Chemical mapping of a 207-nucleotide RNA with 2A3. For 2A3 the reverse transcriptase was SuperScript II with manganese. The reactions ran in a buffer of 150 mM KOAc, 10 mM MgCl2 and 150 mM bicine (pH 8.5), at 24 C. Reactivities are rounded to 0.1 and cut off at 0 and 3. Source: RMDB library OK3TST, as collected in RNAgym. The 2A3 profile rests on 576 reads. Reactivities are given for positions 27 through 156.
RNA sequence: GGGAACGACUCGAGUAGAGUCGAAAAGGCUAGGUAGGCCUGUGAUCUGGCCUGUUGGUGUUCCUCAAACUUCAUGUCCACGUCUCUUUGGGCAGACGAAGCUGGAGGACUGCAGGAACAUGAUUGCGGAGCUGCGGAUAGAACUGAAGAAGGCCAAGCAUGAGCGUAAUUUCGAUUACGCUCAUGCAAAAGAAACAACAACAACAAC
Reactivity to 2A3 in 0.01 (KOAc 150mM, MgCl2 10mM, bicine 150mM(pH8.5), 24C), signal-to-noise 1, nucleotides 027 to 156: g000g000c030u010a000g080g000u060a090g000g260c000c000u000g020u010g040a000u000c040u000g050g000c000c010u020g040u070u110g080g060u070g120u100u030c000c020u010c020a180a110a050c000u030u000c000a020u090g000u000c000c010a030c090g270u110c070u030c070u270u170u090g000g000g030c030a030g000a050c130g000a000a000g000c070u070g020g000a000g040g010a070c000u000g020c020a000g000g070a010a020c030a070u250g020a040u000u160g020c070g000g050a190g080c020u000g010c040g020g080a020u100a140g050a130a020c040u100g000a040a020g030a040a010g090g000c030c000a000a000